[RMDB]
Structure probing data (2A3 and DMS) for a 177-nucleotide construct. The 2A3 profile rests on 1,054 reads. Values cover nucleotides 27 to 126. The reactions ran in a buffer of 150 mM KOAc, 10 mM MgCl2 and 150 mM bicine (pH 8.5), at 24 C. 2A3 is a SHAPE reagent: it acylates the 2'-hydroxyl of flexible nucleotides of all four kinds. For DMS the reverse transcriptase was MarathonRT. It was measured as part of the RMDB library OK1LIB.

RNA sequence: GGGAACGACUCGAGUAGAGUCGAAAAUUGAAGGCGUAGUUAAUUCGACUGGUGUUAUGAGUUUUCUGAAAUGCAAAGUGUCGAAGGAUGACAAAUCCCUGUUCUAUCCAAUCAAUGAACUCAUAGAACUUCCCUUGCAGUUCGCUGCAAGGGAAGUAAAAGAAACAACAACAACAAC
Reactivity to 2A3 in 0.01 (KOAc 150mM, MgCl2 10mM, bicine 150mM(pH8.5), 24C), signal-to-noise 3, nucleotides 027 to 126: u120u060g080a050a020g010g020c040g000u040a050g080u140u200a120a130u100u040c010g050a010c090u040g030g000u040g070u040u120a110u020g070a020g040u000u040u130u120c110u090g190a170a130a100u100g060c110a000a000a150g090u070g020u040c000g050a000a030g000g000a040u060g000a020c010a040a050a010u030c000c060c000u050g000u000u050c010u050a050u000c020c000a020a060u050c040a010a050u250g080a060a030c000u010c020a040u020a050g060a020
Reactivity to DMS in 0.01 (KOAc 150mM, MgCl2 10mM, bicine 150mM(pH8.5), 24C), signal-to-noise 3, nucleotides 027 to 126: u020u020g020a130a100g010g020c090g020u010a040g020u010u000a110a280u030u000c050g020a010c000u010g010g020u000g000u000u000a080u030g000a070g030u020u020u020u050c080u000g000a040a080a030u000g000c080a100a060a090g000u030g020u020c030g000a100a120g010g030a050u010g000a020c100a010a140a080u000c030c020c070u000g000u020u030c030u010a070u040c040c020a110a080u030c150a040a010u020g000a020a030c040u000c020a040u000a050g020a100